[RMDB]
About this RNA:
The record gives the reactivity of an RNA of 177 nucleotides to 2A3.
RNA sequence: GGGAACGACUCGAGUAGAGUCGAAAAGCUGAGCUCGUAAUUAAAUUUCCAAUCAAACUGUGUUCAAAAAUGGAAAUUAAAUUUCUUUGACAUAGUGUGCAAAUUUUGAUGAUGUUACAAAAUAUGGCCCUAGUAGCAGCUUCGGCUGCUACUAGGGAAAAGAAACAACAACAACAAC
Reactivity to 2A3 in 0.01 (KOAc 150mM, MgCl2 10mM, bicine 150mM(pH8.5), 24C), signal-to-noise 1, nucleotides 027 to 126: g090c080u040g000a010g010c020u050c020g010u020a170a000u140u110a080a080a000u000u060u000c000c000a020a040u050c050a000a110a000c040u040g000u040g090u290u120c000a130a110a000a000a110u150g000g040a060a000a000u020u160a010a100a020u000u100u080c060u050u000u070g000a010c000a000u020a000g000u080g000u000g190c100a060a180a160u070u050u050u010g170a150u000g040a040u200g020u170u020a060c100a050a080a000a020u090a100u080g070g000